[RMDB]
Conditions: 150 mM KOAc, 10 mM MgCl2 and 150 mM bicine (pH 8.5), 24 C. This 207-nucleotide RNA was probed chemically with 2A3.
RNA sequence: GGGAACGACUCGAGUAGAGUCGAAAACCCCAAGAAUCUUCGGAUUCUUGGGGAAAAAGGGUCAGAUCGGCGAAAGUCGCCACUUCGCCGAGGAGUGCAAUCUGUGAGGCCCCAGGAGGACUGGGUAAAAACACGCGUCGAUUCGUCGACGCGUGAAGUAAUUCAUUUUCUUCGGAAAAUGAAUUACAAAAGAAACAACAACAACAAC
Reactivity to 2A3 in 0.01 (KOAc 150mM, MgCl2 10mM, bicine 150mM(pH8.5), 24C), signal-to-noise 1, nucleotides 027 to 156: c000c000c000c010a000a000g000a000a010u000c010u100u210c290g070g000a000u000u020c000u020u000g000g000g010g000a000a000a000a010a110g080g000g000u020c030a020g010a050u000c010g000g000c020g040a100a030a020g010u030c010g010c010c000a000c000u000u000c000g010c010c000g010a020g000g000a010g000u020g010c000a000a050u020c010u020g010u040g040a050g060g000c010c030c000c000a010g000g050a060g000g120a060c020u020g010g000g010u100a030a050a000a030a000c020a000c000g000c000g010u000c000g000a010u020u080c160g030u000c000g140a000c020g000c000g010u000g000a000a010
Reactivities are given for positions 27 through 156.